RNA sequence: GGGAACGACUCGAGUAGAGUCGAAAAUUCACUGGGGUCGACAACUCUGGGGAGAGAAGGGAGGAUCAGCUGGGAAGAGUAUAUCCUACGGGAAUCCCUGGUUUCCCCUUGUGUCCAGCCCCUCCCCCUUUUCUUAGCAGUUCGCUGCUAAGAAAAGAAAAGAAACAACAACAACAAC
Reactivity to DMS in 0.01 (KOAc 150mM, MgCl2 10mM, bicine 150mM(pH8.5), 24C), signal-to-noise 1, nucleotides 027 to 126: u010u010c060a140c140u000g030g000g000g030u000c280g030a030c080a020a060c050u010c090u000g000g000g010g000a020g010a020g010a200a080g000g020g000a020g000g000a210u020c030a050g000c210u030g020g010g020a020a120g010a170g010u010a050u000a070u000c000c000u000a040c050g000g020g010a300a110u000c010c000c010u000g010g000u000u010u000c000c000c000c000u000u010g000u000g000u010c010c100a120g000c000c000c000c000u000c020c010c010c090